[RMDB]
RNA sequence: GGGAACGACUCGAGUAGAGUCGAAAAUAGCGAGGGAACUCCGUCCGGGGGUGAACCGCGAAACAGUACCGGACUCGCCAUGUAGCAUCCUGUCUUUCGGAGACUGCCUGGUUAACUAAAAGAGAGACUAAACAUGUAGCGCCGAGGAUGUAGGCUUCAUCUGAUCUAGGUUCGCCUAGAUCAGAUGAAAAGAAACAACAACAACAAC
Reactivity to 2A3 in 0.01 (KOAc 150mM, MgCl2 10mM, bicine 150mM(pH8.5), 24C), signal-to-noise 2, nucleotides 027 to 156: u110a040g010c040g060a290g000g000g030a000a010c020u000c070c050g030u030c020c020g010g010g010g000g000u020g010a030a030c000c010g000c020g040a020a030a000c110a010g080u140a040c000c000g000g000a010c020u030c090g000c000c000a010u020g010u030a020g000c010a070u030c000c010u010g000u070c030u030u020u040c020g000g010a010g000a030c000u010g000c000c030u010g000g000u030u060a060a060c090u140a020a000a050a000g030a000g000a000g020a000c040u100a080a080a050c090a110u170g050u210a050g100c040g000c040c000g020a040g130g040a030u040g040u070a020g030g010c000u030u010